[RMDB]
RNA sequence: GGGAACGACUCGAGUAGAGUCGAAAAGAUAUGGAGUACAUCCCUCAUGAUGGUUUGCACGAGAACCAUUCGGAAACGAAUGAAGUUCGAUGAGUGUUGACCAUCAUGAGGGAUGUACUCCUAAGUCGUACAUCUAAUUCUUCGGAAUUAGAUGUACAAAAGAAACAACAACAACAAC
Reactivity to DMS in 0.01 (KOAc 150mM, MgCl2 10mM, bicine 150mM(pH8.5), 24C), signal-to-noise 5, nucleotides 027 to 126: g010a100u000a300u010g010g010a020g010u000a010c000a010u000c000c000c000u000c000a010u000g010a010u000g000g000u000u000u010g020c000a010c000g000a230g010a020a010c020c010a010u000u000c000g010g010a180a130a280c020g020a020a000u000g000a180a160g030u000u000c010g000a160u020g010a240g000u000g010u000u000g010a000c000c000a010u000c000a000u000g000a000g000g000g000a000u000g010u000a000c000u000c010c000u000a000a050g010u000c100
The record gives the reactivity of an RNA of 177 nucleotides to DMS. The data come from the RNA Mapping Database (RMDB), library TTRINS. Conditions: 150 mM KOAc, 10 mM MgCl2 and 150 mM bicine (pH 8.5), 24 C.